Chemical mapping of a 177-nucleotide RNA with 2A3. Source: RMDB library OK1LIB, as collected in RNAgym. The reactions ran in a buffer of 150 mM KOAc, 10 mM MgCl2 and 150 mM bicine (pH 8.5), at 24 C.
RNA sequence: GGGAACGACUCGAGUAGAGUCGAAAAAGAUACUUUUCCGAAGAUGAAGUAUACUGUGCAAGAGUAAUUACCGGGUUUUCACGGCCUCAAAGACAUAUCAGUGAAAUAACUGUAUACACAGAACCUAGACGGUGCGUUAAUUCGUUAACGCACCGUCAAAAGAAACAACAACAACAAC
Reactivity to 2A3 in 0.01 (KOAc 150mM, MgCl2 10mM, bicine 150mM(pH8.5), 24C), signal-to-noise 1, nucleotides 027 to 126: a000g040a040u190a050c000u090u080u050u060c080c100g120a120a000g020a050u230g020a000a000g040u050a300u070a050c020u070g000u000g100c110a180a110g070a030g020u070a250a000u110u050a070c000c040g030g030g020u030u050u110u240c020a020c000g030g100c000c000u030c020a140a100a000g100a000c000a000u020a020u100c070a030g000u090g070a050a050a050u050a110a110c000u030g000u300a000u070a000c000a000c000a010g070a030a000c050c000u000a030